The record gives the reactivity of an RNA of 207 nucleotides to 2A3. Conditions: 150 mM KOAc, 10 mM MgCl2 and 150 mM bicine (pH 8.5), 24 C. The 2A3 profile rests on 836 reads. Values cover nucleotides 27 to 156.
RNA sequence: GGGAACGACUCGAGUAGAGUCGAAAAAAGAGUUUCUCUGUUCUCUAAAAUAAAAACAGAGUGGUGGAGUCAUUAUGACCCUCUUAGAGUUUCCAGUUUCUCUAAAAAACUGGUGGCGAGACUGCUCAAAAUCAUUAGACCUUCGGGUCUAAUGAAACUUUAACGAAUGGUUCGCCAUUCGUUAAAGAAAAGAAACAACAACAACAAC
Reactivity to 2A3 in 0.01 (KOAc 150mM, MgCl2 10mM, bicine 150mM(pH8.5), 24C), signal-to-noise 2, nucleotides 027 to 156: a000a060g010a000g000u000u000u000c000u000c010u000g000u040u000c010u000c030u030a190a300a160a200u130a020a000a020a070a000c010a000g010a010g010u000g010g010u040g010g040a280g030u000c000a060u000u300a060u300g000a020c000c020c000u010c020u050u150a060g000a010g010u000u000u000c010c000a000g000u000u010u000c000u000c030u180a060a040a030a000a000a020c000u000g010g010u000g010g010c010g000a060g060a070c080u110g040c020u040c070a090a150a000a070u060c000a000u000u000a000g000a000c000c000u030u040c150g120g000g040u020c000u000a000a000u000g000a000a000a000